[RMDB]
RNA sequence: GGGAACGACUCGAGUAGAGUCGAAAAGAAAUUACCCACAUGGAGACAGCAGAAAAUGAGAAAGGAGAGAUCGUGCUGCGAAUAAUUCCAGCGAGUGCCAAGGGGCUAGUUGAGGAAUGGCUUCAUGCAAGUGAAAUAUCUUCGGAUAUUUCACUUGAAAAGAAACAACAACAACAAC
Reactivity to 2A3 in 0.01 (KOAc 150mM, MgCl2 10mM, bicine 150mM(pH8.5), 24C), signal-to-noise 4, nucleotides 027 to 126: g040a000a120a010u120u090a110c010c010c000a000c020a020u060g010g010a020g020a030c040a020g020c020a010g100a090a150a040a080u150g020a080g060a100a080a030g050g040a070g000a000g000a020u040c040g040u060g020c020u000g000c010g010a040a020u220a100a040u110u000c020c010a010g020c000g040a040g070u100g030c020c010a090a070g120g020g000g000c010u030a030g050u050u070g090a040g020g030a030a030u060g020g000c010u020u020c020a010u050g020
Reactivity to DMS in 0.01 (KOAc 150mM, MgCl2 10mM, bicine 150mM(pH8.5), 24C), signal-to-noise 4, nucleotides 027 to 126: g010a090a100a120u000u010a170c020c010c010a250c110a060u010g000g000a060g010a070c050a070g040c050a040g000a070a050a080a070u010g000a090g010a040a080a070g000g010a090g000a090g010a050u000c040g000u000g000c030u000g010c080g020a050a140u000a070a110u000u010c020c010a030g000c030g010a100g020u010g000c050c040a070a110g000g010g020g010c050u000a050g000u000u000g010a100g000g000a070a080u010g010g000c030u000u010c070a060u010g000
Structure probing data (2A3 and DMS) for a 177-nucleotide construct.
The reactions ran in a buffer of 150 mM KOAc, 10 mM MgCl2 and 150 mM bicine (pH 8.5), at 24 C.
The data come from the RNA Mapping Database (RMDB), library RFMREP.
For 2A3 the reverse transcriptase was SuperScript II with manganese.
Values cover nucleotides 27 to 126.